[RMDB]
RNA sequence: GGGAACGACUCGAGUAGAGUCGAAAAGAUAUGGAGGUCAGUAUAUCAACUCCACCUCGGAAACGAGGUGAGAGUGACCACGUACGACCUCCUAAGUCAAAGAAGGCUAUGUUCGCAUAGCCUUCAACGAGCAAUGGAAGUUCGCUUCCAUUGCUCGAAAAGAAACAACAACAACAAC
Reactivity to DMS in 0.01 (KOAc 150mM, MgCl2 10mM, bicine 150mM(pH8.5), 24C), signal-to-noise 1, nucleotides 027 to 126: g010a010u000a130u010g000g000a040g010g020u000c000a140g040u010a010u010a080u050c150a160a030c020u000c000c010a030c000c010u010c000g000g000a030a030a080c000g010a010g000g040u000g000a040g000a020g010u010g040a130c280c160a070c220g000u020a010c010g000a000c000c000u000c000c020u000a000a050g000u000c020a140a110a200g000a010a000g010g000c000u000a000u000g000u010u000c300g000c010a020u000a020g010c000c000u000u000c000a020a140